[RMDB]
RNA sequence: GGGAACGACUCGAGUAGAGUCGAAAAGAAAGAAAGAAAGACCAGUGUCCUGAUCCUGGACCUUGACUAUGAAACAAUUCUAAAAAAAUGCAUCAUAGUCCAGUGUCCAGGGACAGUGCACUCGGAAACGGUCUACACUUUUCGAAGUGUAGACCGUAAAAGAAACAACAACAACAAC
Reactivity to 2A3 in 0.01 (KOAc 150mM, MgCl2 10mM, bicine 150mM(pH8.5), 24C), signal-to-noise 2, nucleotides 027 to 126: g050a030a030a010g130a000a040a000g110a090a040a010g070a000c020c040a000g000u010g060u100c000c000u040g010a140u010c000c000u000g000g000a000c000c000u010u010g000a000c000u030a010u010g020a020a260a080c060a050a190u040u030c010u090a080a010a000a000a000a000a040u020g000c020a070u000c000a000u000a000g040u000c010c000a040g020u130g000u200c010c000a000g000g000g000a000c000a000g010u000g000c010a000c000u020c000g000g020a070a120
An RNA of 177 nucleotides, treated with 2A3 and read out base by base. Reactivities are given for positions 27 through 126. Conditions: 150 mM KOAc, 10 mM MgCl2 and 150 mM bicine (pH 8.5), 24 C.